[RMDB]
RNA sequence: GGGAACGACUCGAGUAGAGUCGAAAAAUGAGGUCGUACAAUGGGUUGUCGAAAGCCGAAGAAAAAUGUCGGUGUGUACGACCAAGAGUAUGUUUGAAUUUUCUACGGCUUUCUCAGGCAUACUCAAGGUUGACGGUGAUUUCGAUCAUCGUCAACCAAAAGAAACAACAACAACAAC
Reactivity to 2A3 in 0.01 (KOAc 150mM, MgCl2 10mM, bicine 150mM(pH8.5), 24C), signal-to-noise 6, nucleotides 027 to 126: a010u210g040a040g010g000u010c000g000u010a010c040a040a070u180g200g080g060u160u130g040u100c040g020a010a000a010g000c010c030g060a100a060g090a060a090a030a050a030u260g100u130c070g040g040u100g000u020g010u070a000c000g000a000c000c000a000a010g000a010g000u010a010u000g000u000u020u020g030a040a050u010u030u050u020c070u080a030c040g020g000c040u020u030u020c030u000c000a010g010g000c000a000u000a010c010u000c010a030a040
Reactivity to DMS in 0.01 (KOAc 150mM, MgCl2 10mM, bicine 150mM(pH8.5), 24C), signal-to-noise 3, nucleotides 027 to 126: a060u040g010a130g010g010u000c000g000u000a000c010a020a080u030g010g020g010u010u010g000u000c080g000a030a030a030g070c000c010g000a120a120g020a050a060a030a050a070u040g020u020c070g000g020u020g010u010g000u000a000c000g000a010c010c000a020a030g000a020g000u010a000u000g000u020u000u010g000a040a100u010u010u000u000c090u010a130c070g000g000c010u000u000u000c110u010c000a030g000g000c000a010u000a020c000u010c010a040a080

Structure probing data (2A3 and DMS) for a 177-nucleotide construct.
The DMS profile rests on 9,349 reads.
The 2A3 profile rests on 7,423 reads.
Source: RMDB library OK1LIB, as collected in RNAgym.
DMS adducts were read by reverse transcription with MarathonRT.
The reactions ran in a buffer of 150 mM KOAc, 10 mM MgCl2 and 150 mM bicine (pH 8.5), at 24 C.